RNA sequence: GGGAACGACUCGAGUAGAGUCGAAAAGAAGUGGAUUGCAGAUGCUAGAUUUGGAGAGAUGCAGUUUGUGCAAAGGAGGGUCGUGAAAUGGCCUUCGAAAUGUGUCUGCCAAGGCUAAAAUAAUCACAUUUUGUAUUUGCACAGCAUUUUCAUUGUACACUCGACUUUUAUUCGUAAAAGUCGAGUGAAAAGAAACAACAACAACAAC
Reactivity to 2A3 in 0.01 (KOAc 150mM, MgCl2 10mM, bicine 150mM(pH8.5), 24C), signal-to-noise 4, nucleotides 027 to 156: g090a060a000g050u040g030g050a060u060u060g000c040a010g010a050u040g020c020u030a020g010a140u080u080u120g040g000a020g000a000g000a030u050g010c010a010g030u090u160u100g000u000g000c000a000a040a010g090g010a030g010g030g000u000c020g030u040g100a080a070a070u180g000g000c000c000u020u020c020g020a000a010a020u010g000u010g000u000c050u040g030c030c000a110a030g070g010c020u070a040a090a060a040u190a060a080u130c030a010c000a020u020u020u010u050g080u040a090u010u030u020g000c000a010c010a030g010c010a020u100u020u040u070c040a030u020u150g030u040a010
Reactivity to DMS in 0.01 (KOAc 150mM, MgCl2 10mM, bicine 150mM(pH8.5), 24C), signal-to-noise 2, nucleotides 027 to 156: g020a080a060g000u000g010g010a140u010u010g030c040a070g010a120u000g010c040u000a130g020a140u000u010u010g020g000a160g000a100g000a060u000g010c040a100g030u010u000u000g050u000g010c010a040a030a100g010g000a050g000g040g040u000c020g040u010g010a080a130a130u000g020g000c010c000u000u000c010g000a020a050a010u020g020u010g010u000c040u000g000c100c050a080a100g090g020c040u000a040a070a050a150u000a130a150u020c030a030c000a040u000u000u000u020g000u000a170u010u010u000g000c010a050c080a130g040c020a090u000u010u000u000c040a150u000u010g020u010a190